RNA sequence: GGGAACGACUCGAGUAGAGUCGAAAAUCGACUCCAUAAUGACCCAUCAGUCAAACGGUAUAUCUCAAACGACUACGGUUUACUCCAAAUUCAUUGGCUAGUUGAGGCCAAGAAACACCUGAUUUUUGAUGAAAUAGAUCUUCGGAUCUAUUUCAUCAAAAGAAACAACAACAACAAC
Reactivity to 2A3 in 0.01 (KOAc 150mM, MgCl2 10mM, bicine 150mM(pH8.5), 24C), signal-to-noise 3, nucleotides 027 to 126: u070c000g050a030c000u050c060c030a060u100a150a070u180g050a060c000c020c040a040u050c020a020g020u050c000a010a000a100c020g050g020u040a050u020a060u050c030u050c040a140a160a070c070g090a050c020u040a010c050g070g010u010u050u050a040c040u030c020c040a060a030a080u100u050c050a120u080u030g010g000c000u060a110g080u020u060g080a040g000g000c000c010a000a000g030a000a060a010c020a030c040c030u020g110a180u000u000u010u000u100